This 177-nucleotide RNA was probed chemically with DMS and 2A3. The DMS profile rests on 3,797 reads. Reactivities are given for positions 27 through 126.
RNA sequence: GGGAACGACUCGAGUAGAGUCGAAAAUGGCGGAAAAUAGAUGUUGUCAUUAUAAUAAUAAAUGAAACAAUUAUGUUGGAGGUAAACACGCAUGAAAUGUAUUGUAGGUCUAGGUAAUAUAGGUAAAAUCUGCCCUAUAGUUCGCUAUAGGGCAGAUAAAAGAAACAACAACAACAAC
Reactivity to DMS in 0.01 (KOAc 150mM, MgCl2 10mM, bicine 150mM(pH8.5), 24C), signal-to-noise 2, nucleotides 027 to 126: u040g020g020c040g000g000a080a030a040a070u000a080g010a100u010g010u000u000g010u010c010a010u010u010a070u030a110a110u050a050a110u010a040a010a040u000g000a050a030a000c020a030a070u030u030a040u020g010u010u010g000g020a030g000g000u010a040a030a060c060a040c060g000c080a060u070g000a090a070a040u010g000u010a040u000u010g010u000a040g000g000u020c030u010a090g010g020u010a040a080u040a110u000a040g000g000u010a030a040a040
Reactivity to 2A3 in 0.01 (KOAc 150mM, MgCl2 10mM, bicine 150mM(pH8.5), 24C), signal-to-noise 2, nucleotides 027 to 126: u160g000g000c090g000g050a020a000a150a030u060a060g210a180u050g010u060u000g060u000c020a000u050u070a000u000a300a010u160a200a020u040a020a070a050u010g010a030a000a010c000a030a030u150u060a090u060g150u180u070g080g000a010g010g020u050a000a100a000c000a000c050g040c020a030u160g130a030a010a000u090g040u030a080u180u120g010u160a000g010g010u000c030u070a040g000g000u030a070a120u140a030u020a150g040g000u130a080a030a000
The RNA was probed in 150 mM KOAc, 10 mM MgCl2 and 150 mM bicine (pH 8.5) at 24 C.